[RMDB]
RNA sequence: GGGAACGACUCGAGUAGAGUCGAAAAUGCGGUCGACGACCUCAUAGUUUCCGUAGUCAACGUAAAGGACCUCGACUCGAUCUUCAACAAUGUCCGUUAUGACCGCACGGAACAUCGCGCCGAACGCCCGCAUAGUGGUGUUCGCACCACUAUGCGGAAAAGAAACAACAACAACAAC
Reactivity to 2A3 in 0.01 (KOAc 150mM, MgCl2 10mM, bicine 150mM(pH8.5), 24C), signal-to-noise 6, nucleotides 027 to 126: u080g000c000g000g010u050c030g050a110c040g050a060c010c020u090c040a130u100a100g040u000u040u020c000c030g000u030a030g030u020c040a030a060c090g060u050a120a070a170g060g020a050c010c020u020c040g040a040c060u010c070g110a180u050c040u120u070c060a080a080c050a100a220u120g030u010c010c010g020u050u090a110u230g010a020c000c030g000c020a010c010g020g000a030a050c000a060u080c010g000c020g000c020c030g040a060a020c010g020c000
Reactivity to DMS in 0.01 (KOAc 150mM, MgCl2 10mM, bicine 150mM(pH8.5), 24C), signal-to-noise 3, nucleotides 027 to 126: u040g020c010g000g000u010c010g020a090c200g010a100c130c090u010c050a080u020a100g000u020u020u000c020c020g000u010a140g050u010c090a110a100c120g050u000a060a110a100g000g010a060c050c070u020c060g000a080c110u000c020g020a050u000c040u050u010c120a110a110c120a050a060u010g020u000c000c000g010u020u030a070u010g000a020c020c070g040c130a070c040g000g000a000a060c020a120u030c040g000c000g090c000c020g000a050a090c170g000c020

Conditions: 150 mM KOAc, 10 mM MgCl2 and 150 mM bicine (pH 8.5), 24 C. An RNA of 177 nucleotides, treated with 2A3 and DMS and read out base by base. As a SHAPE reagent, 2A3 marks flexible, mostly unpaired nucleotides at the ribose 2'-OH. DMS (dimethyl sulfate) methylates the pairing face of unpaired adenines and cytosines. The 2A3 profile rests on 4,948 reads.